[RMDB]
RNA sequence: GGGAACGACUCGAGUAGAGUCGAAAACCUAUUUCGCACUGGCACUGACCACCAAGCAUCUGAUUAAGCCACGGUUGGUGCGGCAAAGCACGCGAAAGGCACGUACACCCCAACCGCUGGAAAGUGAACCCAGUUUUAGGUUCGCCUAAAACUGGGUAAAAGAAACAACAACAACAAC
Reactivity to 2A3 in 0.01 (KOAc 150mM, MgCl2 10mM, bicine 150mM(pH8.5), 24C), signal-to-noise 1, nucleotides 027 to 126: c010c000u010a160u000u080u130c070g030c010a000c060u120g120g060c020a020c040u070g050a090c010c010a000c020c030a000a000g020c010a110u000c070u160g070a170u220u180a020a070g050c010c000a000c010g020g010u060u000g010g000u020g070c000g000g000c070a060a080a020g010c040a030c100g120c000g030a090a070a030g080g020c120a010c040g060u090a010c010a080c110c000c010c000a010a000c000c000g090c030u030g060g000a040a020a150g150u100g040a060
Reactivity to DMS in 0.01 (KOAc 150mM, MgCl2 10mM, bicine 150mM(pH8.5), 24C), signal-to-noise 2, nucleotides 027 to 126: c000c000u000a160u010u000u000c090g000c020a110c070u000g010g010c020a060c070u030g020a040c040c020a050c070c090a160a130g000c030a080u000c080u000g000a170u000u000a110a100g000c050c040a090c140g000g000u000u010g040g040u000g000c020g000g040c070a060a100a150g050c110a090c140g020c020g020a020a080a060g000g000c000a040c070g010u000a090c130a160c070c020c000c050a040a070c030c060g020c060u000g000g000a080a020a120g000u000g020a070